RNA sequence: GGGAACGACUCGAGUAGAGUCGAAAACACAAUGUGCGCCAUUAACUUUGUUUAUGCAAGCACGUUUCGCAAUGUACGGCGCAGAAACAUUGCCAACACAAAUACGCUUCACGAUGUGCGGCACAGAAAAAGCUCGCGCACUUCGGUGCGCGAGCAAGUCAAGUAACGACUUCGGUCGUUACUUGACAAAAGAAACAACAACAACAAC
Reactivity to 2A3 in 0.01 (KOAc 150mM, MgCl2 10mM, bicine 150mM(pH8.5), 24C), signal-to-noise 2, nucleotides 027 to 156: c110a000c040a060a300u060g000u020g000c000g030c050c010a040u090u030a190a050c170u160u160u270g060u030u210u110a100u140g040c030a000a050g040c030a000c070g000u030u060u070c010g000c040a050a030u010g000u020a060c050g070g050c080g050c140a010g100a020a040a000c000a000u020u020g000c010c030a160a010c060a050c030a160a150a060u180a140c080g000c040u090u090c090a060c120g040a020u050g190u190g000c040g080g000c060a020c000a020g280a040a100a040a000a000g010c020u000c000g020c000g070c010a060c000u040u100c070g050g020u000g040c000g000c000g000a000g000c000a000a000
An RNA of 207 nucleotides, treated with 2A3 and read out base by base. Reactivities are rounded to 0.1 and cut off at 0 and 3. Conditions: 150 mM KOAc, 10 mM MgCl2 and 150 mM bicine (pH 8.5), 24 C.